[RMDB]
RNA sequence: GGGAACGACUCGAGUAGAGUCGAAAACAACGGGGCUAGCCGUCAGGUGUUCCUCCCCCCGAGAGGGGAAGAGUGAGGCUUAUCCCGGGGAACUCGGCGAAUCGUCCCCGCAUGGCAGAGACCGAGCGAAACGGUAAUACUUCGGUAUUACCGUUUCAAAAGAAACAACAACAACAAC
Reactivity to 2A3 in 0.01 (KOAc 150mM, MgCl2 10mM, bicine 150mM(pH8.5), 24C), signal-to-noise 1, nucleotides 027 to 126: c030a010a040c000g000g000g000g030c040u040a000g020c010c010g120u070c020a120g020g210u090g120u150u000c000c020u040c000c000c000c020c000c030g130a070g060a100g100g000g000g000a000a020g030a020g030u060g010a040g020g030c010u020u050a040u040c040c020c020g000g010g000g010a030a010c010u000c020g000g000c010g010a040a060u000c020g010u010c010c030c000c000g000c030a120u120g030g000c020a020g020a030g000a190c000c040g010a000g030c040
Reactivity to DMS in 0.01 (KOAc 150mM, MgCl2 10mM, bicine 150mM(pH8.5), 24C), signal-to-noise 1, nucleotides 027 to 126: c130a130a060c050g000g000g010g010c100u000a060g010c020c000g050u000c060a100g020g020u010g000u000u020c030c010u020c010c040c000c000c030c070g000a140g040a150g010g040g000g010a010a010g000a030g000u020g020a200g010g000c040u010u000a160u000c000c000c000g010g010g010g000a090a060c040u010c020g030g000c000g010a010a030u010c040g070u000c010c000c010c020g000c070a150u000g000g000c050a130g020a120g010a110c000c060g020a070g010c120
An RNA of 177 nucleotides, treated with 2A3 and DMS and read out base by base. For DMS, 939 sequencing reads were counted. Conditions: 150 mM KOAc, 10 mM MgCl2 and 150 mM bicine (pH 8.5), 24 C.